[RMDB]
RNA sequence: GGGAACGACUCGAGUAGAGUCGAAAAAGUAUCUAAUUCGUUAGAUACUCGGGGACGGGUGAGGCGGCCGUGUGCGCAGUCAGUGCUCCAGCCGCGCGCGCGAAUUUCGCCUAUUCGUAGGCGAAAAUCUUACCGACUAGUUCGCUAGUCGGUAAGAAAAAGAAACAACAACAACAAC
Reactivity to 2A3 in 0.01 (KOAc 150mM, MgCl2 10mM, bicine 150mM(pH8.5), 24C), signal-to-noise 1, nucleotides 027 to 126: a030g000u000a010u010c000u020a030a030u050u070c140g070u070u000a010g000a010u010a010c010u010c030g010g010g010g030a050c030g010g090g090u020g050a100g210g000c040g000g040c040c020g100u170g010u020g040c000g040c020a040g170u180c070a010g050u050g060c030u030c010c010a000g040c020c010g000c000g000c000g010c010g010c030g070a020a060u020u010u000c000g000c000c000u000a010u010u010c210g030u050a000g000g010c000g000a020a020a010a030
Reactivity to DMS in 0.01 (KOAc 150mM, MgCl2 10mM, bicine 150mM(pH8.5), 24C), signal-to-noise 2, nucleotides 027 to 126: a020g010u000a000u000c000u000a020a030u000u020c180g000u000u000a000g010a000u000a000c000u000c040g030g000g000g010a230c050g000g000g030u000g010a070g030g010c030g010g000c040c030g020u010g000u010g000c030g030c010a120g010u010c250a120g020u010g000c010u000c040c030a060g000c010c010g000c020g000c010g010c030g000c040g000a090a140u000u010u000c010g010c010c000u000a020u010u000c170g010u000a020g000g000c000g000a000a010a040a060
This 177-nucleotide RNA was probed chemically with 2A3 and DMS. For 2A3, 1,422 sequencing reads were counted. The RNA was probed in 150 mM KOAc, 10 mM MgCl2 and 150 mM bicine (pH 8.5) at 24 C. For DMS, 2,326 sequencing reads were counted.